[RMDB]
RNA sequence: GGGAACGACUCGAGUAGAGUCGAAAAUCGUCCUCCUGAAGACGCGCUGCUUUCGAGGAGGCUAGCGCAGCUAGAGCACGCCACGUCAACAAGGAUACAUCCACGUGAGCGGCGGCGGGUGAUGGCGACGCGGUGCGUAUUUCGAUACGCACCGCGUAAAAGAAACAACAACAACAAC
Reactivity to DMS in 0.01 (KOAc 150mM, MgCl2 10mM, bicine 150mM(pH8.5), 24C), signal-to-noise 3, nucleotides 027 to 126: u020c090g020u010c020c080u010c010c000u000g000a070a040g000a080c130g000c070g060c000u000g000c010u000u000u000c050g020a150g050g000a040g010g010c110u080a010g000c000g010c060a130g020c010u000a040g000a280g030c040a020c000g040c000c000a060c010g000u000c050a090a080c150a050a300g000g000a060u030a130c110a120u020c010c010a050c290g010u000g010a230g000c020g000g000c160g020g000c040g000g040g000u000g010a210u000g020g020c110g000
Reactivity to 2A3 in 0.01 (KOAc 150mM, MgCl2 10mM, bicine 150mM(pH8.5), 24C), signal-to-noise 5, nucleotides 027 to 126: u050c010g020u040c010c010u060c000c010u100g040a130a010g070a090c050g000c010g030c070u050g000c010u030u040u080c100g080a170g080g010a020g060g000c050u070a020g000c050g000c050a040g010c030u060a030g000a000g080c060a030c120g010c000c000a010c010g050u060c060a100a090c020a150a120g020g000a020u070a190c050a130u020c010c000a030c020g000u020g030a130g000c010g040g020c060g020g020c000g000g000g020u040g040a090u110g010g020c010g010
An RNA of 177 nucleotides, treated with DMS and 2A3 and read out base by base. High 2A3 reactivity points to a flexible backbone, as in loops and unpaired stretches. It was measured as part of the RMDB library OK1LIB. DMS adducts were read by reverse transcription with MarathonRT. Conditions: 150 mM KOAc, 10 mM MgCl2 and 150 mM bicine (pH 8.5), 24 C. 2A3 adducts were read by reverse transcription with SuperScript II with manganese.